[RMDB]
RNA sequence: GGGAACGACUCGAGUAGAGUCGAAAAACUAUGAUGGAUCUUGUAUAUGCCCUGAGGCACUUUGAUCAAAAUAGCGAAGUGCUUAAGGCUAUCUUAGUGAAGUAUGGUUGCUGUGAUGUUACCUACUAUACUAGAUUAGGUUCGCCUAAUCUAGUAUAAAAGAAACAACAACAACAAC
Reactivity to DMS in 0.01 (KOAc 150mM, MgCl2 10mM, bicine 150mM(pH8.5), 24C), signal-to-noise 4, nucleotides 027 to 126: a060c060u000a020u000g010a010u000g000g000a080u000c030u000u000g000u020a030u000a030u010g030c070c020c030u000g020a120g000g010c000a000c000u010u000u000g000a060u010c170a070a100a120a110u010a100g010c010g000a010a010g020u000g000c000u000u000a120a090g000g000c010u000a010u000c040u010u000a030g010u000g010a270a100g000u000a020u000g000g010u010u000g020c040u010g030u000g010a090u000g010u000u000a100c060c020u010a060c200u000
Reactivity to 2A3 in 0.01 (KOAc 150mM, MgCl2 10mM, bicine 150mM(pH8.5), 24C), signal-to-noise 2, nucleotides 027 to 126: a000c070u100a120u200g070a020u020g030g020a030u000c020u020u050g080u070a020u010a020u130g030c020c080c000u000g080a050g000g060c000a000c020u010u000u030g030a070u210c100a100a140a110a110u120a060g030c010g020a010a000g010u000g000c000u020u030a000a000g010g000c010u000a000u000c000u020u040a020g010u010g020a000a010g010u010a030u040g020g010u000u020g030c040u070g060u060g100a040u070g040u060u040a010c010c000u050a030c070u010
Source: RMDB library 15KREP, as collected in RNAgym. Structure probing data (DMS and 2A3) for a 177-nucleotide construct. Reactivities are rounded to 0.1 and cut off at 0 and 3. DMS adducts were read by reverse transcription with MarathonRT. Conditions: 150 mM KOAc, 10 mM MgCl2 and 150 mM bicine (pH 8.5), 24 C.